About this RNA:
Source: RMDB library M2RFPK, as collected in RNAgym. Structure probing data (2A3 and DMS) for a 207-nucleotide construct. For DMS the reverse transcriptase was MarathonRT. The RNA was probed in 150 mM KOAc, 10 mM MgCl2 and 150 mM bicine (pH 8.5) at 24 C.
[RMDB]
RNA sequence: GGGAACGACUCGAGUAGAGUCGAAAAUGAAGCAAAUCCAUAAUUGCCAAUGAUGAGCAAUUCGCUAUUGCCGCCUAAAAACGGUUAGCCGGGGCUGCUAGAACCUUGUUACCAAAGAUAGCCGGCGUUACGGCAUGAUGGUUCGCCAUCAUGCCAACCCUUAGAAUGAGUUCGCUCAUUCUAAGGGAAAAGAAACAACAACAACAAC
Reactivity to 2A3 in 0.01 (KOAc 150mM, MgCl2 10mM, bicine 150mM(pH8.5), 24C), signal-to-noise 4, nucleotides 027 to 156: u090g050a070a030g020c050a050a040a110u080c030c020a030u090a110a030u070u020g010c010c030a070a100u230g080a140u070g030a110g000c010a000a040u060u070c070g000c050u080a060u090u160g010c020c010g020c020c000u070a090a050a030a000a010c020g000g030u080u050a010g000c000c000g010g010g010g020c040u050g020c030u050a030g040a100a040c000c020u010u080g060u100u080a050c030c030a100a040a000g060a050u050a020g050c020c020g040g000c020g010u050u080a050c110g000g010c000a010u000g000a000u000g000g020u030u030c100g040c040c010a000u000c000a000u000g000c000c000a000a010
Reactivity to DMS in 0.01 (KOAc 150mM, MgCl2 10mM, bicine 150mM(pH8.5), 24C), signal-to-noise 2, nucleotides 027 to 156: u000g010a120a120g010c070a040a090a180u000c020c060a050u000a080a030u000u010g000c030c010a080a160u000g020a130u000g020a140g010c000a030a070u000u010c040g010c030u000a080u000u000g030c000c000g000c000c000u000a070a140a130a140a080c010g010g010u000u000a100g040c030c060g010g030g010g000c120u000g010c010u000a120g000a090a040c030c010u000u000g010u010u000a110c060c040a070a120a100g020a120u000a030g030c020c080g010g010c050g010u000u000a080c100g010g000c000a020u000g000a030u000g030g010u010u000c300g020c000c000a000u000c000a030u020g010c010c010a000a010